RNA sequence: GGGAACGACUCGAGUAGAGUCGAAAAGGACUAUUGUUCAGGCAUGAAGCCUCCACGUGCGUGCGAAAGCACCCGGAAACGGCUGAGCAAUGUUCCGAUCUGACGGAGGCACGGCUCAAAAUAAAAAGGUGCUUCAACUGUUCGCAGUUGAAGUACCAAAAGAAACAACAACAACAAC
Reactivity to DMS in 0.01 (KOAc 150mM, MgCl2 10mM, bicine 150mM(pH8.5), 24C), signal-to-noise 4, nucleotides 027 to 126: g000g000a010c010u000a010u000u010g020u000u000c000a000g000g050c010a000u020g000a100a070g030c010c000u000c010c010a300c010g060u000g010c020g050u000g010c030g000a130a080a170g000c010a000c000c000c000g000g000a080a100a140c010g000g010c010u000g000a030g000c000a020a010u000g000u020u000c010c010g000a080u000c030u000g010a080c020g000g010a000g000g060c020a300c090g000g000c060u000c020a090a050a100a030u040a010a050a060a080a100
Reactivity to 2A3 in 0.01 (KOAc 150mM, MgCl2 10mM, bicine 150mM(pH8.5), 24C), signal-to-noise 5, nucleotides 027 to 126: g000g000a000c010u020a040u020u020g000u000u000c000a000g000g000c000a000u000g030a100a020g000c000c000u000c000c000a020c010g000u000g000c000g000u000g000c000g040a070a020a000g000c000a000c000c000c000g010g010a030a040a020c010g000g000c000u000g000a000g000c000a000a010u020g010u060u000c000c010g010a040u010c010u020g040a040c030g000g000a000g000g000c010a010c010g020g000c000u010c030a050a080a020a060u210a050a080a060a020a010